[RMDB]
RNA sequence: GGGAACGACUCGAGUAGAGUCGAAAAGAGUCUGACAAGAUGUACCAGGUCCCACUGACAUUGGACCGGGAUGGGACCCUAGUCCGGCUCCGCUUCACUAUGGUGGCCCUGAUCACUGUCUGCUGUCUGAGUGCAUUACGUUCGCGUAAUGCACUCAAAAAGAAACAACAACAACAAC
Reactivity to DMS in 0.01 (KOAc 150mM, MgCl2 10mM, bicine 150mM(pH8.5), 24C), signal-to-noise 2, nucleotides 027 to 126: g010a090g010u010c020u000g000a050c090a110a060g000a080u000g020u010a100c060c020a050g000g000u000c070c000c040a090c060u000g000a080c200a160u000u020g020g010a020c030c050g000g000g000a090u010g000g010g010a040c030c180c080u000a090g020u010c010c040g000g010c060u000c010c040g010c180u000u000c060a030c080u010a070u020g000g010u000g010g000c300c030c030u010g010a020u010c030a020c050u000g000u000c020u000g000c060u000g000u000c100
Reactivity to 2A3 in 0.01 (KOAc 150mM, MgCl2 10mM, bicine 150mM(pH8.5), 24C), signal-to-noise 1, nucleotides 027 to 126: g030a000g020u020c020u030g000a010c010a100a090g020a140u110g050u110a040c040c010a020g000g040u000c030c010c000a040c030u060g030a040c030a150u080u160g030g020a040c070c030g020g000g040a030u050g000g020g010a000c020c000c010u050a020g040u000c020c000g020g000c040u010c030c040g000c020u050u080c040a050c050u090a070u190g080g000u010g020g010c000c000c010u010g050a020u020c040a000c030u040g020u010c020u030g020c030u030g060u090c030

This 177-nucleotide RNA was probed chemically with DMS and 2A3. Source: RMDB library OK2TRN, as collected in RNAgym. Reactivities are rounded to 0.1 and cut off at 0 and 3. For DMS, 2,061 sequencing reads were counted.